[RMDB]
This 177-nucleotide RNA was probed chemically with DMS and 2A3. Conditions: 150 mM KOAc, 10 mM MgCl2 and 150 mM bicine (pH 8.5), 24 C. The 2A3 profile rests on 6,290 reads. High 2A3 reactivity points to a flexible backbone, as in loops and unpaired stretches. Source: RMDB library M2PK50, as collected in RNAgym. DMS adducts were read by reverse transcription with MarathonRT.

RNA sequence: GGGAACGACUCGAGUAGAGUCGAAAAAUCCUGCCCUUCGGGGCAGGAUGCAGCUUCGCUCUUGAGAGCGCGACUUAAGAGGAAUCCGAACGCGCAGAAGCACUAUUUCUCAGUUCGCUGAGAAAAACCAUCACUCCUAAUUCGUUAGGAGUGAUGGAAAAGAAACAACAACAACAAC
Reactivity to DMS in 0.01 (KOAc 150mM, MgCl2 10mM, bicine 150mM(pH8.5), 24C), signal-to-noise 4, nucleotides 027 to 126: a050u000c000c000u000g000c000c000c000u000u020c190g010g000g000g010c010a010g010g010a000u000g020c150a100g010c040u000u000c020g010c040u010c000u000u010g000a100g000a070g020c020g000c060g000a130c060u000u000a070a050g000a020g010g020a100a110u000c050c030g000a140a120c090g000c060g030c040a100g010a040a020g010c060a130c180u010a120u010u000u000c000u000c000a010g020u000u010c240g010c020u000g000a020g000a010a000a030a120a130
Reactivity to 2A3 in 0.01 (KOAc 150mM, MgCl2 10mM, bicine 150mM(pH8.5), 24C), signal-to-noise 4, nucleotides 027 to 126: a000u010c000c000u000g010c020c000c000u020u090c300g030g000g000g000c000a000g000g010a000u000g000c000a030g000c020u030u020c020g000c010u040c000u090u100g050a080g030a020g100c030g000c020g070a160c020u050u120a030a010g020a010g080g110a100a110u030c050c030g020a150a050c060g010c000g000c070a030g040a050a000g050c030a020c040u110a200u070u060u000c010u000c000a020g020u040u080c190g020c070u000g000a000g000a030a020a010a000a000